[RMDB]
RNA sequence: GGGAACGACUCGAGUAGAGUCGAAAAGGAGAGUCCCGCUCCUUCAGGUGAACGAUCUCGGUUGUUUCUCUGAAGGCAUGAUCACCCCGUCCGAUGCGGAAGUUAGUGCUUCCGUCGAACGCGAAAGUAAAACCCUAAAGCUUCGGCUUUAGGGUAACAAAAACGAUUUCUUCGGAAAUCGUUUUUGAAAAGAAACAACAACAACAAC
Reactivity to DMS in 0.01 (KOAc 150mM, MgCl2 10mM, bicine 150mM(pH8.5), 24C), signal-to-noise 3, nucleotides 027 to 156: g020g010a110g000a130g000u000c000c020c020g000c080u000c020c010u010u010c010a050g010g030u000g000a040a060c010g010a040u000c020u020c240g080g020u010u000g010u000u000u000c030u000c010u000g010a040a030g010g030c080a040u010g010a130u000c060a150c020c000c010c000g030u000c010c010g010a080u010g040c040g030g010a030a150g010u000u000a160g020u010g020c000u000u010c000c000g010u000c020g010a020a040c040g000c020g000a120a090a100g000u000a060a100a110a120c000c000c010u000a000a010a060g000c000u010u000c300g050g000c010u000u000u000a000g000g010g010u000a000a020
Reactivity to 2A3 in 0.01 (KOAc 150mM, MgCl2 10mM, bicine 150mM(pH8.5), 24C), signal-to-noise 2, nucleotides 027 to 156: g050g030a040g020a000g100u040c000c000c000g010c030u010c000c000u000u020c010a030g040g020u130g060a020a000c010g020a030u000c020u070c200g080g000u020u010g000u000u090u000c020u000c000u000g010a010a000g010g000c010a080u110g020a050u080c060a060c040c000c020c010g000u010c010c010g010a040u090g140c040g020g000a000a000g000u030u130a080g030u180g300c010u000u000c000c010g010u020c020g020a030a000c010g040c020g050a080a020a020g150u150a020a000a040a040c000c000c000u000a020a000a000g010c000u020u180c260g030g000c000u000u040u000a000g000g020g000u000a000a000
The record gives the reactivity of an RNA of 207 nucleotides to DMS and 2A3. Values cover nucleotides 27 to 156. For DMS, 6,874 sequencing reads were counted. Conditions: 150 mM KOAc, 10 mM MgCl2 and 150 mM bicine (pH 8.5), 24 C. As a SHAPE reagent, 2A3 marks flexible, mostly unpaired nucleotides at the ribose 2'-OH. DMS adducts were read by reverse transcription with MarathonRT.